[RMDB]
RNA sequence: GGGAACGACUCGAGUAGAGUCGAAAAAAAUUAUGGUCGCCGGCACGUAUGUGCACACCGAGAAUGUCACUCUUUCGCCGUCAACCGUGUCGGUAGUCUUGCACAUCAGGAAUCCGUCUGCGUUGAACUGUAAUAAGGUGUUCGCACCUUAUUACAGAAAAGAAACAACAACAACAAC
Reactivity to 2A3 in 0.01 (KOAc 150mM, MgCl2 10mM, bicine 150mM(pH8.5), 24C), signal-to-noise 5, nucleotides 027 to 126: a000a000a010u230u090a130u090g020g010u030c020g020c000c000g020g000c020a010c010g080u130a030u220g060u100g010c030a000c000a000c030c030g020a010g060a150a100u170g050u140c020a030c060u060c030u050u130u110c070g020c040c020g050u060c030a030a040c040c010g000u020g010u020c010g000g020u020a030g010u000c020u020u050g020c070a030c000a100u100c020a010g010g060a040a050u040c020c020g060u000c040u040g040c040g070u040u090g050a100a060
Reactivity to DMS in 0.01 (KOAc 150mM, MgCl2 10mM, bicine 150mM(pH8.5), 24C), signal-to-noise 6, nucleotides 027 to 126: a030a050a070u010u010a040u000g010g000u000c040g000c020c020g010g010c020a030c050g010u000a060u020g020u000g010c080a070c070a070c150c060g000a070g000a090a090u010g010u010c120a090c110u000c060u000u000u000c070g010c040c030g000u010c060a070a060c130c030g010u000g010u000c020g010g000u000a060g010u000c030u000u010g010c080a050c100a070u000c060a050g010g010a070a050u000c020c020g000u000c040u000g010c100g010u010u000g010a070a150
An RNA of 177 nucleotides, treated with 2A3 and DMS and read out base by base. It was measured as part of the RMDB library M2PK90. 2A3 adducts were read by reverse transcription with SuperScript II with manganese. Conditions: 150 mM KOAc, 10 mM MgCl2 and 150 mM bicine (pH 8.5), 24 C. For DMS the reverse transcriptase was MarathonRT. In probing experiments dimethyl sulfate is read out at A N1 and C N3, which are open when not base-paired.